[RMDB]
RNA sequence: GGGAACGACUCGAGUAGAGUCGAAAAGCUCAUUACUUCGGUAAUGAGCAAAUAAAUUCAGCGGUAAUAGCUCCGCAAAUAUUACCGCUGAUGCGGAGCUUAAAACAGCUAGGUUCGCCUAGCUGAAGAAGGAAACCAUGUUCGCAUGGUUUCCUUCAAAAGAAACAACAACAACAAC
Reactivity to 2A3 in 0.01 (KOAc 150mM, MgCl2 10mM, bicine 150mM(pH8.5), 24C), signal-to-noise 1, nucleotides 027 to 126: g000c010u020c000a000u010u020a000c000u000u040c230g040g000u000a000a010u000g000a000g000c010a000a010a010u070a010a070a050u050u030c010a010g000c020g040g010u040a040a000u020a060g000c020u090c100c040g060c090a000a120a050u140a050u080u080a090c000c000g000c020u020g010a000u010g000c010g060g020a060g070c010u060u130a000a110a090a080c010a010g010c000u000a000g040g020u030u020c250g070c040c000u000a000g000c000u000g000a000a050
Reactivity to DMS in 0.01 (KOAc 150mM, MgCl2 10mM, bicine 150mM(pH8.5), 24C), signal-to-noise 1, nucleotides 027 to 126: g040c000u000c000a000u000u000a000c000u000u000c140g000g000u010a000a010u000g010a000g000c000a000a030a040u000a020a050a140u000u000c010a010g010c000g030g000u000a000a020u000a000g000c100u000c080c220g030c260a040a080a170u000a000u000u000a010c010c010g000c000u000g000a000u000g000c150g010g000a100g000c040u000u000a000a090a090a160c000a010g000c000u000a000g010g000u000u010c220g000c030c000u000a000g010c000u010g010a030a010
Structure probing data (2A3 and DMS) for a 177-nucleotide construct. For DMS the reverse transcriptase was MarathonRT. High 2A3 reactivity points to a flexible backbone, as in loops and unpaired stretches.